An RNA of 177 nucleotides, treated with DMS and 2A3 and read out base by base. DMS adducts were read by reverse transcription with MarathonRT. It was measured as part of the RMDB library OK2TRN. The DMS profile rests on 1,031 reads. The reactions ran in a buffer of 150 mM KOAc, 10 mM MgCl2 and 150 mM bicine (pH 8.5), at 24 C.

RNA sequence: GGGAACGACUCGAGUAGAGUCGAAAAAAACUCCGGAAAGUCGUGAACGGAAUCCUGGAGGCAGUCAAACUUAUCAGUUACAAGGUUCGCACGGCCUCUUGUGACAAGACAGCGUGCUUCAAUGAGCUACGAAACAUCGUUUCGACGAUGUUUCGUAAAAAGAAACAACAACAACAAC
Reactivity to DMS in 0.01 (KOAc 150mM, MgCl2 10mM, bicine 150mM(pH8.5), 24C), signal-to-noise 2, nucleotides 027 to 126: a060a110a080c120u000c000c080g000g000a150a080a050g010u000c040g010u000g000a160a080c040g020g010a090a090u000c040c010u000g010g000a050g010g030c010a040g000u000c030a030a020a030c020u000u000a070u000c080a080g030u010u000a090c240a100a070g000g010u000u000c030g040c090a040c080g010g000c010c020u000c030u000u000g000u000g010a080c020a110a130g000a080c090a130g020c030g020u000g010c000u030u000c060a120a080u000g000a090g010c070
Reactivity to 2A3 in 0.01 (KOAc 150mM, MgCl2 10mM, bicine 150mM(pH8.5), 24C), signal-to-noise 1, nucleotides 027 to 126: a000a000a000c100u070c030c000g000g040a200a080a000g010u010c010g010u060g030a050a020c000g020g050a040a020u030c000c000u020g010g010a020g000g000c010a010g000u040c020a040a030a000c010u000u090a120u200c050a160g120u050u110a030c050a100a020g090g000u000u020c070g000c040a000c000g050g010c010c000u020c000u000u040g060u060g000a040c030a050a060g070a010c070a010g050c020g060u060g050c040u000u030c030a110a170u190g010a030g050c090